The data come from the RNA Mapping Database (RMDB), library OK3TST. Chemical mapping of a 207-nucleotide RNA with 2A3 and DMS.
[RMDB]
RNA sequence: GGGAACGACUCGAGUAGAGUCGAAAAUUGUUGAUAACUACUAUGAAAAAGGCUACUUCCAUCACGUAAAAGUUACAGCUCCGACUGAUCAAGCAACAGCUUCAGCAUUUGUUAAAAAAUUACGUGCUUAUACUCGCAAAUUAACACUUGGUAUGGGUAAGAUAGCUCAGUUCGCUGAGCUAUCUUAAAAAGAAACAACAACAACAAC
Reactivity to 2A3 in 0.01 (KOAc 150mM, MgCl2 10mM, bicine 150mM(pH8.5), 24C), signal-to-noise 2, nucleotides 027 to 156: u070u020g030u020u010g000a100u060a150a060c040u090a110c060u130a120u140g080a090a100a090a110a060g010g000c030u070a010c010u060u020c000c000a090u010c010a020c050g040u050a010a090a000a040g050u060u080a040c000a030g020c030u000c040c010g200a220c080u050g030a080u170c090a090a000g090c020a050a140c010a110g040c060u110u060c020a030g000c050a100u150u050u000g020u060u130a030a080a000a060a140a060u140u040a010c010g000u010g000c030u090u070a050u030a070c100u140c040g000c020a010a000a240u090u130a190a010c040a050c070u030u050g000g010u080a070u090g040g000g020
Reactivity to DMS in 0.01 (KOAc 150mM, MgCl2 10mM, bicine 150mM(pH8.5), 24C), signal-to-noise 1, nucleotides 027 to 156: u030u000g000u020u000g010a110u010a090a140c010u000a050c070u000a060u000g030a030a120a100a100a140g010g020c000u000a040c040u000u030c020c020a070u000c030a050c020g020u010a060a060a060a170g000u000u000a110c070a120g020c030u010c010c050g010a090c020u010g010a050u000c050a090a140g020c010a070a070c080a030g010c030u000u000c030a130g040c010a050u010u000u010g040u000u000a000a010a130a100a040a080u000u000a080c050g010u000g020c070u000u020a100u020a080c020u000c040g000c060a030a060a140u000u010a050a040c050a030c050u020u000g030g000u000a080u000g000g010g030
Record summary
The 2A3 profile rests on 644 reads. 2A3 adducts were read by reverse transcription with SuperScript II with manganese. DMS adducts were read by reverse transcription with MarathonRT. Conditions: 150 mM KOAc, 10 mM MgCl2 and 150 mM bicine (pH 8.5), 24 C.